[RMDB]
RNA sequence: GGGAACGACUCGAGUAGAGUCGAAAAACCGUGAGUGGAACCCUCGAUCCUUUAUUGGGGGGUACACUCGAGGAGUGGAAGGCGGGGAGGAGGGGGCUGAGGGCUAACCUACGGAAAUUCCUGAGCUAUGCCCGAGGCUUCGGCCUCGGGAAAAGAAACAACAACAACAAC
Reactivity to DMS in 0.01 (KOAc 150mM, MgCl2 10mM, bicine 150mM(pH8.5), 24C), signal-to-noise 2, nucleotides 027 to 129: a130c000c040g000u080g010a070g020u000g000g070a000a000c150c000c000u010c000g000a150u210c160c120u150u000u050a190u010u010g060g020g060g000g000g000u010a130c000a220c160u010c060g000a140g130g000a070g010u030g000g000a200a060g000g130c080g000g050g000g000a160g000g000a230g100g050g000g000g020c000u010g000a130g070g000g010c060u000a230a020c170c000u180a000c010g010g010a110a000a230u050u050c100c010u010g070a000g000c000u000a050u090g040
Reactivity to 2A3 in 0.01 (KOAc 150mM, MgCl2 10mM, bicine 150mM(pH8.5), 24C), signal-to-noise 1, nucleotides 027 to 129: a000c000c040g000u030g040a030g000u070g140g060a040a040c000c000c000u000c000g000a140u110c020c020u170u040u090a040u080u210g000g000g000g000g000g000u050a000c020a000c070u040c000g060a000g050g000a050g000u160g000g050a000a030g100g000c160g040g010g060g000a230g010g000a090g000g040g020g000g000c110u200g120a050g000g000g000c000u050a070a000c000c000u000a070c000g040g110a050a050a060u030u000c000c000u060g000a090g000c000u090a060u220g000
Chemical mapping of a 170-nucleotide RNA with DMS and 2A3. For 2A3, 1,054 sequencing reads were counted. The RNA was probed in 150 mM KOAc, 10 mM MgCl2 and 150 mM bicine (pH 8.5) at 24 C. 2A3 adducts were read by reverse transcription with SuperScript II with manganese. DMS (dimethyl sulfate) methylates the pairing face of unpaired adenines and cytosines.